RNA sequence: GGGAACGACUCGAGUAGAGUCGAAAAUUCGCCAUCUCUCUAUUGAAGGAAAAGGUCCGCAGCCCGAGAUCGGAAACAAUAAUCGCCGCUCUUACACCGUAGAGACAAUCCAGGCCCUCCGGGAGUACCUACCGCCUAUGUUCGCAUAGGCGGUAGGAAAAGAAACAACAACAACAAC
Reactivity to 2A3 in 0.01 (KOAc 150mM, MgCl2 10mM, bicine 150mM(pH8.5), 24C), signal-to-noise 2, nucleotides 027 to 126: u050u040c060g020c030c010a100u030c050u000c000u040c020u020a080u120u080g150a140a170g010g030a110a010a070a000g100g010u020c100c020g000c030a030g040c060c030c030g010a040g000a040u090c050g070g000a110a130a000c100a030a110u180a060a040u110c050g000c040c030g030c020u040c010u100u050a040c010a040c020c020g020u040a000g000a000g000a100c020a000a020u000c000c000a030g000g000c020c000c000u010c000c000g000g020g000a030g000u000a080
Reactivity to DMS in 0.01 (KOAc 150mM, MgCl2 10mM, bicine 150mM(pH8.5), 24C), signal-to-noise 1, nucleotides 027 to 126: u000u010c020g020c010c000a010u020c080u000c000u030c040u000a050u000u000g020a120a140g050g010a030a070a050a110g060g050u000c020c030g000c070a060g000c000c060c010g000a050g000a020u000c060g000g010a100a000a080c140a040a140u000a100a080u000c000g010c040c040g060c000u000c060u000u000a100c090a050c000c040g010u030a070g000a050g000a060c090a070a030u040c000c000a120g000g090c000c000c010u000c000c000g000g040g060a120g000u000a090
The record gives the reactivity of an RNA of 177 nucleotides to 2A3 and DMS.
Conditions: 150 mM KOAc, 10 mM MgCl2 and 150 mM bicine (pH 8.5), 24 C.
It was measured as part of the RMDB library OK1LIB.
Reactivities are given for positions 27 through 126.
For DMS the reverse transcriptase was MarathonRT.